[RMDB]
RNA sequence: GGGAACGACUCGAGUAGAGUCGAAAAGGCUCAACAAAUAAUAAGUGCAAACAACAUUGUACCUUUUGCUCGUAAGCAAGUAGCUGUAGCUUAAUUGCCGAAACGCCUCUUAUAGGUUCGAGCGUCUGUGAUUUGACUCCGUUAAGGAUUGCAGACUCAACUAGACUAUGUUCGCAUAGUCUAGUUGAAAAGAAACAACAACAACAAC
Reactivity to 2A3 in 0.01 (KOAc 150mM, MgCl2 10mM, bicine 150mM(pH8.5), 24C), signal-to-noise 9, nucleotides 027 to 156: g050g000c020u040c070a040a060c060a100a170a070u220a100a050u150a210a070g030u050g050c030a040a060a080c050a070a050c030a140u040u040g020u060a040c010c020u030u070u060u100g000c000u000c020g020u030a010a030g000c010a010a030g030u040a000g040c060u110g120u270a030g000c010u080u070a120a080u170u070g000c000c000g010a050a060a040c060g010c030c000u080c060u110u200a170u160a250g010g000u040u060c020g010a010g000c020g000u000c010u000g020u010g020a030u010u020u100g040a060c050u000c090c050g040u070u080a040a020g020g000a010u010u010g000c000a000g000a010c010u000
Reactivity to DMS in 0.01 (KOAc 150mM, MgCl2 10mM, bicine 150mM(pH8.5), 24C), signal-to-noise 2, nucleotides 027 to 156: g040g000c060u000c020a090a160c060a030a060a060u000a120a130u010a130a040g020u000g000c060a040a040a150c040a130a150c060a240u000u010g020u010a040c030c010u000u000u000u000g040c040u000c070g060u000a130a060g000c040a060a030g020u000a060g010c010u000g030u010a080g020c000u000u000a020a070u000u000g010c010c000g000a090a170a070c130g060c030c000u010c080u010u000a050u000a060g020g030u000u000c030g010a130g000c030g040u000c010u000g020u000g010a090u010u000u000g010a170c070u000c100c120g010u000u000a070a300g020g000a040u000u000g010c020a020g000a040c070u000

Chemical mapping of a 207-nucleotide RNA with 2A3 and DMS. DMS adducts were read by reverse transcription with MarathonRT. The reactions ran in a buffer of 150 mM KOAc, 10 mM MgCl2 and 150 mM bicine (pH 8.5), at 24 C. For DMS, 3,742 sequencing reads were counted. The 2A3 profile rests on 8,442 reads.